An RNA of 177 nucleotides, treated with DMS and 2A3 and read out base by base. The data come from the RNA Mapping Database (RMDB), library OK2TST. The reactions ran in a buffer of 150 mM KOAc, 10 mM MgCl2 and 150 mM bicine (pH 8.5), at 24 C. For DMS the reverse transcriptase was MarathonRT.
RNA sequence: GGGAACGACUCGAGUAGAGUCGAAAAAGGCCCCGCGUGGCUAUGGUGACGCGAACCUCUGGGCCCCCUGUCGGUUAGAGCGGUACCGUCUGGGAGGAGCCGCCCGCAUUGUCUCGGUGGGGGCAAGACUGGUAAUAGUAUUCGUACUAUUACCAGUAAAAGAAACAACAACAACAAC
Reactivity to DMS in 0.01 (KOAc 150mM, MgCl2 10mM, bicine 150mM(pH8.5), 24C), signal-to-noise 9, nucleotides 027 to 126: a100g010g000c010c020c030c050g010c050g020u000g010g010c030u000a050u010g030g020u000g000a040c060g010c020g000a140a120c070c030u000c070u000g010g010g000c020c010c010c010c010u000g020u000c030g010g000u000u010a090g010a080g010c040g010g000u000a130c090c010g000u000c050u000g010g000g010a130g010g010a290g010c050c020g000c030c000c010g010c060a100u000u000g010u000c030u000c020g020g010u000g010g000g000g010g010c070a050a040g000
Reactivity to 2A3 in 0.01 (KOAc 150mM, MgCl2 10mM, bicine 150mM(pH8.5), 24C), signal-to-noise 8, nucleotides 027 to 126: a000g080g010c010c010c020c000g010c010g020u050g060g030c040u060a090u300g180g010u080g070a020c010g010c010g020a070a070c000c030u070c070u100g060g100g000c010c000c000c000c010u040g100u110c010g000g030u040u100a040g010a030g140c040g000g030u050a070c010c010g020u010c060u090g030g030g010a110g010g030a020g050c020c030g000c010c020c000g040c020a080u060u120g050u050c030u020c090g050g020u070g020g030g000g000g000c000a010a000g050